[RMDB]
RNA sequence: GGGAACGACUCGAGUAGAGUCGAAAAGUGGAGGACAAAGGAAAGCAUCUCCAGGGAAGGUUUCAUAGAGGAAGUGGCCUUGUGCUGACUCAAAAGUCACUAGGAUUACUCCACGUAGAUCAAGGGGCGGACCACACAGGUUCGCCUGUGUGGUCCGAAAAGAAACAACAACAACAAC
Reactivity to 2A3 in 0.01 (KOAc 150mM, MgCl2 10mM, bicine 150mM(pH8.5), 24C), signal-to-noise 4, nucleotides 027 to 126: g050u020g000g030a020g010g010a010c070a100a110a030g070g010a170a040a010g070c050a090u020c010u030c020c000a020g060g020g000a050a060g030g000u030u110u170c100a090u210a110g130a030g090g060a080a110g020u030g030g030c000c010u020u050g010u050g000c020u040g020a050c040u030c210a020a030a020a040g060u090c010a010c040u070a030g030g000a100u080u060a040c020u010c010c010a020c040g040u070a060g000a080u080c050a060a030g000g020g010g010
Reactivity to DMS in 0.01 (KOAc 150mM, MgCl2 10mM, bicine 150mM(pH8.5), 24C), signal-to-noise 3, nucleotides 027 to 126: g010u000g020g000a040g000g000a100c120a080a120a210g020g020a080a060a080g030c080a050u000c020u020c050c060a090g000g000g000a140a090g020g000u010u000u020c020a090u010a090g000a140g010g030a100a020g050u030g000g020c000c000u000u030g000u010g000c050u010g010a060c120u000c230a070a060a060a070g000u010c000a050c090u000a110g010g010a110u040u030a110c000u000c000c010a040c050g000u000a090g010a110u010c110a130a020g000g000g010g000